Record summary
The data come from the RNA Mapping Database (RMDB), library TTRDES. An RNA of 177 nucleotides, treated with 2A3 and DMS and read out base by base. The 2A3 profile rests on 8,720 reads. For 2A3 the reverse transcriptase was SuperScript II with manganese. For DMS, 3,785 sequencing reads were counted.
RNA sequence: GGGAACGACUCGAGUAGAGUCGAAAAGAUAUGGAAUGGUUAAGGGAGCUCAAUGUCGGAAACGACAUGAGAGCGAGGAUCUUACCAUUCCUAAGUCAAAACAAUUUAGAGUUCGCUCUAAAUUGAAGUAUAUCGUGUACUUCGGUACACGAUAUACAAAAGAAACAACAACAACAAC
Reactivity to 2A3 in 0.01 (KOAc 150mM, MgCl2 10mM, bicine 150mM(pH8.5), 24C), signal-to-noise 3, nucleotides 027 to 126: g000a020u000a010u060g000g000a000a010u010g000g030u190u300a060a040g040g030g060a080g020c000u020c020a040a010u010g000u000c000g000g000a030a000a000c010g040a000c000a010u120g200a270g000a000g130c010g040a120g050g040a050u000c010u040u000a000c000c000a000u000u000c000c000u000a000a000g000u010c010a000a030a080a230c020a010a010u000u010u000a010g000a020g040u130u140c300g110c080u000c000u000a010a020a020u010u010g030a150a010
Reactivity to DMS in 0.01 (KOAc 150mM, MgCl2 10mM, bicine 150mM(pH8.5), 24C), signal-to-noise 2, nucleotides 027 to 126: g000a010u000a050u000g000g020a010a000u000g000g000u010u010a010a000g030g000g000a060g000c000u020c000a250a020u000g030u000c010g010g000a010a000a050c000g010a010c000a000u000g010a140g030a010g010c010g000a080g020g000a080u020c010u000u010a010c000c000a000u000u010c000c000u010a000a040g000u010c010a100a100a150a300c010a030a010u000u000u000a000g000a050g020u010u020c300g010c000u000c000u000a010a000a000u000u000g000a060a130